[RMDB]
Description: An RNA of 177 nucleotides, treated with DMS and 2A3 and read out base by base. For 2A3, 1,178 sequencing reads were counted. High DMS reactivity at an A or C suggests that its Watson-Crick edge is free.

RNA sequence: GGGAACGACUCGAGUAGAGUCGAAAAGCUGGCAUACAGUGGCACGAUCAUGGCUUGCUGCAGCCUCGACUUCCCUGGGCUCAAGCAUUCCUCCCAUCUCAGCCUCCAUUGUUGCUGGGACAGCAGGCUUCCCGCACAAGUUCGCUUGUGCGGGAAGAAAAGAAACAACAACAACAAC
Reactivity to DMS in 0.01 (KOAc 150mM, MgCl2 10mM, bicine 150mM(pH8.5), 24C), signal-to-noise 2, nucleotides 027 to 126: g010c060u000g010g000c070a070u020a240c040a030g000u010g010g000c090a040c090g000a090u000c210a050u000g020g030c030u010u000g030c070u000g020c140a110g010c010c000u020c060g010a140c050u000u000c020c000c030u000g010g000g000c060u000c090a140a090g030c030a150u000u010c020c010u000c050c020c010a130u010c030u000c050a010g000c040c030u000c110c090a060u000u000g010u000u000g010c040u020g000g000g010a040c090a040g030c080a080g000g000
Reactivity to 2A3 in 0.01 (KOAc 150mM, MgCl2 10mM, bicine 150mM(pH8.5), 24C), signal-to-noise 1, nucleotides 027 to 126: g000c020u010g010g000c030a130u170a210c040a110g000u060g010g000c040a040c080g100a130u120c030a100u180g040g000c040u050u190g010c040u080g060c040a020g020c020c000u010c030g040a060c020u020u060c010c000c000u000g000g020g060c000u020c060a050a020g000c000a010u000u120c000c000u010c020c010c010a040u010c030u000c000a000g010c000c000u040c020c020a090u090u220g080u050u040g000c000u060g000g040g000a030c020a020g040c000a000g000g050
The reactions ran in a buffer of 150 mM KOAc, 10 mM MgCl2 and 150 mM bicine (pH 8.5), at 24 C. For 2A3 the reverse transcriptase was SuperScript II with manganese. The DMS profile rests on 1,355 reads.